[RMDB]
RNA sequence: GGGAACGACUCGAGUAGAGUCGAAAACGCAUUUGCAUCACGAGGAGUUGUCUGCUCUCCGACAGAAGGCAGCUGCAGGCACUCUGCCAGGGGGGAGAUAUCUCUCCCAGGCCGCCGCCCUGUUGGAGUUAAUCGGGGUGUUCGCACCCCGAUUAACAAAAGAAACAACAACAACAAC
Reactivity to DMS in 0.01 (KOAc 150mM, MgCl2 10mM, bicine 150mM(pH8.5), 24C), signal-to-noise 1, nucleotides 027 to 126: c140g010c090a090u010u000u000g020c070a070u000c010a100c040g010a040g010g000a050g030u020u000g000u010c040u000g000c100u000c050u000c000c000g030a080c040a020g000a090a150g010g030c050a020g010c050u000g020c040a220g030g020c010a160c120u000c090u020g030c020c040a200g000g080g010g010g000g000a030g000a220u030a090u000c010u010c070u000c000c010c020a110g010g020c000c150g010c020c050g010c080c040c010u000g000u010u000g000g010a160
Description: The record gives the reactivity of an RNA of 177 nucleotides to DMS. Reactivities are given for positions 27 through 126.